[RMDB]
RNA sequence: GGGAACGACUCGAGUAGAGUCGAAAAACUACCGCCAGAGGUUAGCGGUCGCGAAGGUUGGGGAGCCUGAUGACCGGCCGAGAGCUAGUUGGACUGAGGUUUAAGGGAGCCUACAGUGAACGUUCUGCUCCAAGUACUAGUUCGCUAGUACUUGGAGAAAAGAAACAACAACAACAAC
Reactivity to DMS in 0.01 (KOAc 150mM, MgCl2 10mM, bicine 150mM(pH8.5), 24C), signal-to-noise 2, nucleotides 027 to 126: a090c100u000a110c040c040g020c050c060a070g000a160g010g010u010u010a040g020c030g000g010u000c080g030c020g010a050a020g010g010u000u000g020g020g020g000a160g010c010c010u010g000a110u000g010a150c300c010g000g000c010c010g000a040g010a070g020c040u000a020g010u010u000g000g000a070c060u000g010a110g000g000u000u000u000a140a120g010g000g000a150g000c010c010u010a080c060a050g010u000g000a050a060c080g000u000u000c020u000g000
Reactivity to 2A3 in 0.01 (KOAc 150mM, MgCl2 10mM, bicine 150mM(pH8.5), 24C), signal-to-noise 3, nucleotides 027 to 126: a000c010u070a050c010c050g020c030c010a050g080a050g110g090u070u070a020g000c000g000g030u000c000g020c000g040a040a010g020g010u100u050g030g020g000g030a030g020c010c000u170g070a300u060g000a040c010c030g010g000c010c000g040a040g000a000g030c020u030a030g070u050u050g040g030a010c020u020g010a020g060g040u060u060u110a060a050g030g030g000a010g030c010c000u030a100c040a020g020u050g080a090a040c050g020u030u040c010u040g050
An RNA of 177 nucleotides, treated with DMS and 2A3 and read out base by base.
The DMS profile rests on 1,264 reads.
Values cover nucleotides 27 to 126.
For DMS the reverse transcriptase was MarathonRT.